Chemical mapping of a 177-nucleotide RNA with 2A3 and DMS. 2A3 adducts were read by reverse transcription with SuperScript II with manganese. Source: RMDB library OK1LIB, as collected in RNAgym. For 2A3, 5,555 sequencing reads were counted.
[RMDB]
RNA sequence: GGGAACGACUCGAGUAGAGUCGAAAAUUGAGGGAAAAGUGGAACAUGUAUAAGGACCGUGUGGAGCGUGUCGGACCUUCACUUCGUUAUGUGUUUGAUGAAGUAAUGUAUGAACAGCAGCUUACUGCUACUCCACACUGUUCGCAGUGUGGAGUAGAAAAGAAACAACAACAACAAC
Reactivity to 2A3 in 0.01 (KOAc 150mM, MgCl2 10mM, bicine 150mM(pH8.5), 24C), signal-to-noise 8, nucleotides 027 to 126: u090u070g010a070g010g030g000a060a090a030a030g060u050g030g040a070a010c040a090u120g060u120a100u060a220a110g070g030a010c030c030g020u030g030u070g030g020a020g020c050g010u080g070u040c030g030g040a070c000c000u030u040c030a010c020u040u070c020g050u050u050a110u150g180u040g080u070u140u100g080a100u030g020a020a010g010u030a050a100u140g060u110a070u130g040a070a020c030a060g050c010a010g020c030u050u140a060c010u070g020
Reactivity to DMS in 0.01 (KOAc 150mM, MgCl2 10mM, bicine 150mM(pH8.5), 24C), signal-to-noise 4, nucleotides 027 to 126: u020u020g020a070g010g020g000a030a020a030a030g010u020g010g020a070a070c100a070u000g020u000a090u020a060a100g000g000a060c090c070g000u000g050u010g000g010a070g010c110g010u010g000u010c040g030g000a080c100c040u000u000c120a030c010u010u000c000g000u000u000a040u020g020u020g010u030u000u020g000a010u000g000a040a030g020u000a050a060u020g000u010a040u030g010a040a100c120a090g000c050a040g000c090u010u010a100c040u000g010